[RMDB]
RNA sequence: GGGAACGACUCGAGUAGAGUCGAAAACGGUCCACUCGGGAUGCAGUCGCAGAUCGAAUGGAAGGGCGUUCGGUGGGCUCUCUUCGGAGAACCGGCCUACUACACCGGCUCCCGUCGUACCGAGCACUAACGAGAGAUGGUUCGCCAUCUCUCGUUAAAAAGAAACAACAACAACAAC
Reactivity to 2A3 in 0.01 (KOAc 150mM, MgCl2 10mM, bicine 150mM(pH8.5), 24C), signal-to-noise 1, nucleotides 027 to 126: c010g020g040u000c000c000a000c010u010c030g040g030g020a030u040g010c010a060g300u230c090g060c010a010g020a070u040c010g000a000a030u020g020g070a070a080g050g020g030c040g050u140u270c040g160g010u080g050g000g000c020u010c000u000c000u000u080c150g110g000a040g010a030a000c010c010g060g030c000c020u040a100c030u050a010c020a020c010c020g050g010c020u030c060c030c000g050u040c020g040u050a050c000c000g000a030g060c030a010c190
Reactivity to DMS in 0.01 (KOAc 150mM, MgCl2 10mM, bicine 150mM(pH8.5), 24C), signal-to-noise 3, nucleotides 027 to 126: c070g030g010u010c010c010a000c030u000c000g000g020g000a290u000g000c020a190g030u050c290g010c040a030g000a210u010c000g010a010a000u000g000g000a080a090g020g000g000c070g000u000u000c020g010g040u000g020g030g010c020u010c010u000c000u000u000c200g000g010a050g010a010a030c020c030g010g000c030c060u020a100c230u010a220c050a010c020c000g010g000c020u010c010c000c010g020u000c060g020u000a130c040c040g020a120g000c140a150c230
Conditions: 150 mM KOAc, 10 mM MgCl2 and 150 mM bicine (pH 8.5), 24 C. An RNA of 177 nucleotides, treated with 2A3 and DMS and read out base by base. It was measured as part of the RMDB library OK2TST. The DMS profile rests on 1,846 reads. For 2A3, 1,439 sequencing reads were counted. DMS adducts were read by reverse transcription with MarathonRT. For 2A3 the reverse transcriptase was SuperScript II with manganese.